[RMDB]
RNA sequence: GGGAACGACUCGAGUAGAGUCGAAAAUGAAAUAAAGUGUACCAAAUGGUAGGUACACAGCAAGUGUGCGGUGGUCGCACACAACCAGCAGUCAAUAGAGACUGCAAAACCUAACCAAAGAAAAAAAGUUACUUAUCAUCUUCGGAUGAUAAGUAACAAAAGAAACAACAACAACAAC
Reactivity to 2A3 in 0.01 (KOAc 150mM, MgCl2 10mM, bicine 150mM(pH8.5), 24C), signal-to-noise 3, nucleotides 027 to 126: u030g010a020a000a040u170a060a120a040g000u000g000u000a010c010c010a070a050a150u200g100g020u100a080g020g000u000a000c000a000c000a000g030c020a050a110g000u000g000u010g000c000g000g100u200g080g160u240c010g030c000a000c000a000c000a000a080c010c010a000g010c000a000g010u010c010a000a030u100a220g190a030g000a070c020u000g000c010a000a070a000a000c000c010u030a010a020c030c030a090a110a070g220a030a090a030a030a010a010a000
Reactivity to DMS in 0.01 (KOAc 150mM, MgCl2 10mM, bicine 150mM(pH8.5), 24C), signal-to-noise 2, nucleotides 027 to 126: u000g000a080a110a080u000a090a070a100g020u010g000u000a000c010c000a090a120a090u000g030g000u010a100g000g000u000a000c000a010c010a100g000c200a050a090g000u000g000u020g010c000g010g020u020g020g000u010c000g030c000a000c010a000c020a070a170c160c090a110g020c000a010g000u000c010a070a110u010a180g030a210g000a030c000u000g010c000a100a020a120a030c050c050u000a110a070c030c010a080a070a160g060a030a010a100a050a070a160a110